Source: RMDB libraries RFM100 and RFMREP, as collected in RNAgym. The record gives the reactivity of an RNA of 177 nucleotides to DMS and 2A3. In probing experiments dimethyl sulfate is read out at A N1 and C N3, which are open when not base-paired. The reactions ran in a buffer of 150 mM KOAc, 10 mM MgCl2 and 150 mM bicine (pH 8.5), at 24 C. For DMS the reverse transcriptase was MarathonRT.
[RMDB]
RNA sequence: GGGAACGACUCGAGUAGAGUCGAAAAGAUCCUCGGUCGGAUCGGACCUACACUGGUUUUCGCUGCGGUGAUACUUCGAGAAUGAUUAUCACCGGGUGAAAAUCAGGGCAGGUCCGAUUCCACCGAAAAACAAUAUUGUCUUCGGACAAUAUUGUUUAAAAGAAACAACAACAACAAC
Reactivity to DMS in 0.01 (KOAc 150mM, MgCl2 10mM, bicine 150mM(pH8.5), 24C), signal-to-noise 6, nucleotides 027 to 126: g010a110u020c010c000u000c010g000g000u000c270g010g000a010u000c000g010g000a010c000c000u000a040c010a030c000u000g000g000u000u000u000u000c000g020c000u000g010c000g020g010u000g000a010u000a000c200u010u000c010g010a220g030a190a140u050g000a010u000u000a000u000c000a000c000c000g000g000g000u000g000a000a000a010a000u000c000a000g000g000g020c040a010g000g010u000c000c000g000a000u000u000c000c050a020c000c000g000a010a040
Reactivity to 2A3 in 0.01 (KOAc 150mM, MgCl2 10mM, bicine 150mM(pH8.5), 24C), signal-to-noise 9, nucleotides 027 to 126: g110a110u050c000c010u010c000g000g000u010c030g010g000a000u000c000g000g000a000c000c000u010a010c050a020c020u000g010g020u000u000u000u000c020g040c050u300g300c030g000g000u000g000a000u000a040c080u020u020c020g110a130g210a300a210u300g010a080u020u010a000u000c000a000c000c000g010g000g000u010g000a000a000a000a000u000c000a000g000g000g000c020a000g000g000u000c000c000g000a000u010u000c000c000a000c000c000g020a110a000

High 2A3 reactivity points to a flexible backbone, as in loops and unpaired stretches.